Structure probing data (DMS and 2A3) for a 207-nucleotide construct. Conditions: 150 mM KOAc, 10 mM MgCl2 and 150 mM bicine (pH 8.5), 24 C. It was measured as part of the RMDB library M2RFPK. Values cover nucleotides 27 to 156.
RNA sequence: GGGAACGACUCGAGUAGAGUCGAAAAACGUAAACUACGCACUCGCAGCUUAAUAACCUGCGCUGAGCCCUUCUCCCCCAGCUUGCCUGUGUCCUAGGGAAUUGGAAGGUCAUCCUUCACAGGAUCGUCUAGGUAAUCCCUUUCGAGGGAUUACCAACUAUAAUUGGGAGUUCGCUCCCAAUUAUAGAAAAGAAACAACAACAACAAC
Reactivity to DMS in 0.01 (KOAc 150mM, MgCl2 10mM, bicine 150mM(pH8.5), 24C), signal-to-noise 2, nucleotides 027 to 156: a080c070g020u000a030a050a100c040u000a030c030g000c060a130c080u000c040g030c020a050g020c030u000u000a110a150u000a120a130c180c020u000g010c020g000c120u010g000a110g020c020c020c000u000u000c040u000c020c000c010c000c000a080g010c040u010u010g020c020c020u000g020u000g000u020c030c010u000a070g040g040g030a100a100u000u000g020g000a060a050g020g010u000c080a100u000c020c010u000u000c100a120c060a080g020g000a060u010c070g020u000c070u000a120g040g020u000a030a010u000c000c000c000u000u000u000c250g020a050g040g010g000a020u000u000a010c000c000a010a060
Reactivity to 2A3 in 0.01 (KOAc 150mM, MgCl2 10mM, bicine 150mM(pH8.5), 24C), signal-to-noise 2, nucleotides 027 to 156: a030c020g030u060a040a030a090c150u160a030c110g000c040a050c050u010c010g000c000a000g010c010u050u090a040a020u020a110a000c010c000u010g000c010g050c110u060g060a040g030c040c030c040u180u090c090u070c000c000c000c000c000a010g030c050u040u110g030c000c020u040g000u010g020u060c020c080u020a030g040g000g040a100a060u100u090g080g030a060a020g020g030u060c050a080u080c010c010u040u080c000a060c010a020g000g020a010u060c050g040u000c100u070a060g000g000u000a000a000u010c010c000c000u040u040u050c140g060a020g000g000g010a000u000u000a000c000c000a000a000